[RMDB]
RNA sequence: GGGAACGACUCGAGUAGAGUCGAAAAAAACACCGUCCUGCUCAGCGAUAACGUCCUGCAUGCCUGGCGUAUGCUCAUCGUAAACUGCGUGGUCAGAUAGUUGACGAGCUCACGCUUUAUCGCUGGUACAUUCUCUACACUUCGGUGUAGAGAAUGUAAAAGAAACAACAACAACAAC
Reactivity to DMS in 0.01 (KOAc 150mM, MgCl2 10mM, bicine 150mM(pH8.5), 24C), signal-to-noise 2, nucleotides 027 to 126: a050a020a050c150a100c060c070g020u010c020c000u000g000c120u010c010a030g000c010g010a010u000a000a000c090g020u000c180c070u010g020c050a030u000g020c000c040u000g000g000c100g030u000a030u000g020c030u000c100a040u000c040g030u020a020a060a030c040u000g000c010g030u000g000g030u000c010a050g010a170u040a050g010u010u000g000a070c050g020a160g010c140u000c050a010c050g020c000u000u010u000a020u000c020g020c010u000g000g020u010
Reactivity to 2A3 in 0.01 (KOAc 150mM, MgCl2 10mM, bicine 150mM(pH8.5), 24C), signal-to-noise 2, nucleotides 027 to 126: a010a000a000c100a030c010c000g070u020c000c010u070g070c030u030c070a010g000c000g040a010u010a010a020c010g030u010c040c070u070g010c000a020u050g010c020c010u050g260g000c100g020u020a010u060g010c000u000c030a170u060c030g100u090a010a040a020c010u020g010c020g080u130g020g060u060c000a000g060a200u190a100g190u080u100g010a000c030g030a020g060c060u080c040a020c030g010c000u010u000u000a010u000c000g020c000u020g010g000u000